Conditions: 150 mM KOAc, 10 mM MgCl2 and 150 mM bicine (pH 8.5), 24 C. Chemical mapping of a 177-nucleotide RNA with 2A3 and DMS. In probing experiments dimethyl sulfate is read out at A N1 and C N3, which are open when not base-paired. It was measured as part of the RMDB libraries RFM100 and RFMREP. For DMS the reverse transcriptase was MarathonRT. Reactivities are given for positions 27 through 126.
RNA sequence: GGGAACGACUCGAGUAGAGUCGAAAAUAAAAGUCGAAAGUAUUGCUAUAGUUAAGGUUGCGCUUGCCUAUUUAGGCAUACUUCUCAGGAUGGCGCGUUGCAGUCCAACAAGAUCCAGGGACUGUACGUAUUGGAUAAAAUUCGUUUUAUCCAAUACAAAAGAAACAACAACAACAAC
Reactivity to 2A3 in 0.01 (KOAc 150mM, MgCl2 10mM, bicine 150mM(pH8.5), 24C), signal-to-noise 9, nucleotides 027 to 126: u120a000a060a010a010g110u070c050g030a070a030a010g020u020a040u090u260g000c020u060a050u100a230g110u130u160a130a020g020g020u060u110g030c040g010c030u060u120g010c010c000u060a140u090u200u160a040g010g000c000a000u000a010c000u030u020c050u010c080a040g080g030a070u090g020g010c010g010c030g040u020u080g000c000a000g000u000c010c000a040a030c040a150a080g050a120u040c020c020a020g020g010g000a000c000u010g010u010a020c050
Reactivity to DMS in 0.01 (KOAc 150mM, MgCl2 10mM, bicine 150mM(pH8.5), 24C), signal-to-noise 9, nucleotides 027 to 126: u020a060a070a100a110g010u010c070g010a080a040a040g010u000a020u010u020g010c010u000a070u010a060g010u010u010a050a030g000g010u000u010g010c130g000c040u000u010g010c050c000u000a100u010u010u020a060g020g010c000a020u000a010c020u000u000c110u000c060a130g010g010a080u010g000g010c040g010c060g010u010u010g010c000a010g010u000c000c000a070a090c180a070a100g000a090u010c040c050a140g000g000g000a020c010u000g010u000a040c260